[RMDB]
RNA sequence: GGGAACGACUCGAGUAGAGUCGAAAAGGGGUCGUCGUAGCCUACUUGGAUUUAGAAACGAGGGUUACUGAAGCCUCCACGGUAACCUACCCACCGUUUCUUGUCAGUAGGUGAAGACGACGGAGGCACCCAAAAGACGCUGAUUCGUCAGCGUCAAUCCAUAAAAUUAGUUCGCUAAUUUUAUGGAAAAAGAAACAACAACAACAAC
Reactivity to 2A3 in 0.01 (KOAc 150mM, MgCl2 10mM, bicine 150mM(pH8.5), 24C), signal-to-noise 6, nucleotides 027 to 156: g030g000g030g000u010c000g000u000c000g020u030a010g010c000c000u050a060c080u170u290g160g010a080u300u300u150a010g000a010a010a000c000g000a020g000g000g000u000u010a000c000u010g050a090a030g020c010c000u000c010c000a020c010g010g000u000a000a020c010c000u030a070c110c070c020a060c020c030g010u010u000u010c000u000u010g040u020c050a090g030u010a010g000g020u030g020a010a010g020a010c000g000a000c010g000g000a000g000g020c000a050c010c000c000a040a140a020a080g010a000c010g000c010u010g010a010u030u120c290g060u020c120a000g000c000g000u000c010a000a030
Reactivity to DMS in 0.01 (KOAc 150mM, MgCl2 10mM, bicine 150mM(pH8.5), 24C), signal-to-noise 3, nucleotides 027 to 156: g000g000g000g040u000c010g040u000c010g000u000a300g000c000c000u000a000c010u000u010g030g010a090u010u000u000a040g020a040a030a060c010g000a170g030g000g000u000u010a080c010u000g020a040a060g020c010c010u000c010c020a300c020g020g000u000a050a060c000c000u000a030c020c030c050a300c100c010g000u000u000u000c010u010u010g010u010c040a050g020u000a010g010g030u020g010a110a300g010a030c000g010a020c020g010g010a020g040g010c010a100c010c030c020a080a080a120a150g000a020c010g040c000u000g010a120u000u000c250g010u000c010a000g000c000g010u010c000a030a140
Source: RMDB library RNAMAK, as collected in RNAgym. Chemical mapping of a 207-nucleotide RNA with 2A3 and DMS. For 2A3, 6,816 sequencing reads were counted. Values are in units of 0.01, from 0 to 300, in steps of 10.